[RMDB]
RNA sequence: GGGAACGACUCGAGUAGAGUCGAAAAGAUAUGGACCAAGAACUACAGUGGUAGUCCCAACAGCUCGGAAACGAGACAUGGGAUUUCCACUGCUUGGUCCUAAGUCAAAUCCAGCUUCGGCUGGAAAGAAUAUUAUUCGCUUCGGCGAAUAAUAUUCAAAAGAAACAACAACAACAAC
Reactivity to 2A3 in 0.01 (KOAc 150mM, MgCl2 10mM, bicine 150mM(pH8.5), 24C), signal-to-noise 3, nucleotides 027 to 126: g030a020u080a030u130g010g010a000c000c010a000a000g020a070a080c230u300a050c220a000g010u010g000g000u010a000g010u000c000c000c000a100a100c140a080g050c000u000c010g030g030a060a100a100c010g000a010g030a020c030a090u080g020g010g000a000u030u010u000c000c010a010c000u000g000c010u000u000g000g000u000c010c000u000a020a000g000u000c010a040a010a130u010c000c010a010g000c000u080u160c300g200g000c040u040g010g000a030a020a010
Reactivity to DMS in 0.01 (KOAc 150mM, MgCl2 10mM, bicine 150mM(pH8.5), 24C), signal-to-noise 2, nucleotides 027 to 126: g000a060u020a300u010g000g010a010c010c000a000a000g010a090a030c110u030a300c020a010g040u010g000g020u000a020g020u000c000c000c010a030a050c250a160g010c010u010c000g010g000a100a110a170c010g000a010g000a030c090a150u000g000g000g010a010u000u010u000c010c020a000c000u000g000c020u000u000g000g000u000c000c000u010a010a080g010u000c020a050a110a140u000c000c000a010g010c000u010u010c160g040g020c000u000g000g010a000a020a060